This 177-nucleotide RNA was probed chemically with DMS and 2A3. It was measured as part of the RMDB library M2PK50. In probing experiments dimethyl sulfate is read out at A N1 and C N3, which are open when not base-paired. For 2A3 the reverse transcriptase was SuperScript II with manganese. Reactivities are rounded to 0.1 and cut off at 0 and 3. Values cover nucleotides 27 to 126.

[RMDB]
RNA sequence: GGGAACGACUCGAGUAGAGUCGAAAAGCCUUACGAUUCGUCGUAAGGCAUACAAAGUUUUGGCACUAUGAGCCCGCAGCGUUGGUCCUCCCACGCGGUGCAAUACGACGGAUUUCGAUCCGUCGAAACUGAUGUCUCACUUCGGUGAGACAUCAGUAAAAGAAACAACAACAACAAC
Reactivity to DMS in 0.01 (KOAc 150mM, MgCl2 10mM, bicine 150mM(pH8.5), 24C), signal-to-noise 2, nucleotides 027 to 126: g000c000c000u000u040a020c000g000a000u000u010c250g000u000c000g010u000a000a000g010g000c000a000u040a060c170a090a050a090g020u010u010u000u000g000g040c020a070c090u000a110u000g000a170g000c020c010c060g000c050a100g020c020g000u010u000g010g000u010c110c230u020c140c020c010a060c060g010c080g020g010u020g030c080a070a060u010a130c080g010a000c000g010g000a020u000u000u010c170g000a040u000c030c000g000u000c000g010a000a130
Reactivity to 2A3 in 0.01 (KOAc 150mM, MgCl2 10mM, bicine 150mM(pH8.5), 24C), signal-to-noise 1, nucleotides 027 to 126: g000c000c000u000u010a000c000g000a000u030u040c160g030u000c000g000u140a000a000g010g000c000a000u040a010c020a000a080a040g010u030u030u100u180g100g020c020a030c080u050a090u300g070a010g030c000c010c010g050c040a070g000c000g000u030u110g010g010u110c000c040u130c020c030c020a000c000g070c000g000g000u020g020c000a050a040u160a110c020g000a000c000g020g000a010u060u010u060c110g040a010u000c010c000g020u000c000g000a010a060